[RMDB]
RNA sequence: GGGAACGACUCGAGUAGAGUCGAAAAGAAGGUACGCUUUUUGGGAUGGGUUUUUUUUGCGUACCGAAACGCAUGCUUCGCGUCUGGUACCCAUCCCAUCCAGAUGCGUUAAUUAAUUGCAUGCGGAGGCAUGCUUCCAGUUCGCUGGAAGCAUGCCAAAAGAAACAACAACAACAAC
Reactivity to DMS in 0.01 (KOAc 150mM, MgCl2 10mM, bicine 150mM(pH8.5), 24C), signal-to-noise 1, nucleotides 027 to 126: g030a080a080g010g000u000a000c010g040c000u020u000u000u070u050g010g000g000a000u000g010g000g000u030u000u000u010u070u070u010u010g000c000g020u000a000c000c000g030a010a060a070c000g020c000a020u010g000c020u000u000c000g030c010g000u000c000u000g030g000u000a170c170c000c040a030u000c010c000c050a010u040c000c000a010g010a020u000g020c000g000u000u010a010a140u000u020a050a110u040u030g000c010a000u000g000c000g030g030a110
Reactivity to 2A3 in 0.01 (KOAc 150mM, MgCl2 10mM, bicine 150mM(pH8.5), 24C), signal-to-noise 3, nucleotides 027 to 126: g140a100a070g000g010u000a010c020g060c050u100u150u040u190u210g010g030g020a030u030g070g050g020u060u100u040u040u030u060u200u130g000c000g000u000a000c000c000g000a030a000a010c010g010c010a000u010g000c000u070u060c020g000c010g010u000c000u000g000g000u030a040c010c010c000a000u000c000c010c010a010u000c000c000a010g000a010u000g000c000g020u010u050a040a030u140u110a020a060u130u120g000c000a000u010g000c010g000g000a040
The record gives the reactivity of an RNA of 177 nucleotides to DMS and 2A3. Conditions: 150 mM KOAc, 10 mM MgCl2 and 150 mM bicine (pH 8.5), 24 C. The data come from the RNA Mapping Database (RMDB), library OK1LIB.